[RMDB]
RNA sequence: GGGAACGACUCGAGUAGAGUCGAAAAGGGCUGGUCCAUAGAUCCAUUUGGGCAUGGCAGCACGGUGCCUUAUCUGCUGUCCGGAGCGAAUUUCGAGGGAACAAUUAUCCAGCGGAUUCAUUACGCCUGCAGAAAGUCAUUUCGAUGACUUUCUGCAAAAAGAAACAACAACAACAAC
Reactivity to 2A3 in 0.01 (KOAc 150mM, MgCl2 10mM, bicine 150mM(pH8.5), 24C), signal-to-noise 1, nucleotides 027 to 126: g020g000g000c030u030g000g050u020c010c000a030u050a030g050a100u000c070c100a130u050u100u230g000g000g000c020a020u020g020g000c020a010g000c010a000c030g020g070u030g070c060c000u100u140a060u020c020u000g000c040u070g000u090c000c050g040g020a100g060c080g030a010a070u030u240u180c020g000a020g000g000g020a020a020c050a080a150u190u100a030u060c010c020a030g060c010g030g000a010u020u100c010a000u040u130a060c080g060c020c000
Reactivity to DMS in 0.01 (KOAc 150mM, MgCl2 10mM, bicine 150mM(pH8.5), 24C), signal-to-noise 2, nucleotides 027 to 126: g010g010g000c040u010g030g030u020c020c030a070u000a120g020a080u010c060c030a300u000u000u000g020g000g000c050a080u010g000g010c010a040g000c020a020c130g020g000u000g010c060c030u000u000a050u000c060u000g010c010u000g000u030c010c100g010g000a130g010c070g000a040a030u000u000u000c040g010a030g000g000g000a060a100c150a080a100u010u020a100u000c020c010a020g030c030g010g000a030u000u000c030a090u010u000a030c150g030c070c060
Conditions: 150 mM KOAc, 10 mM MgCl2 and 150 mM bicine (pH 8.5), 24 C. This 177-nucleotide RNA was probed chemically with 2A3 and DMS. DMS adducts were read by reverse transcription with MarathonRT. For DMS, 1,609 sequencing reads were counted. It was measured as part of the RMDB library OK2TRN. High 2A3 reactivity points to a flexible backbone, as in loops and unpaired stretches.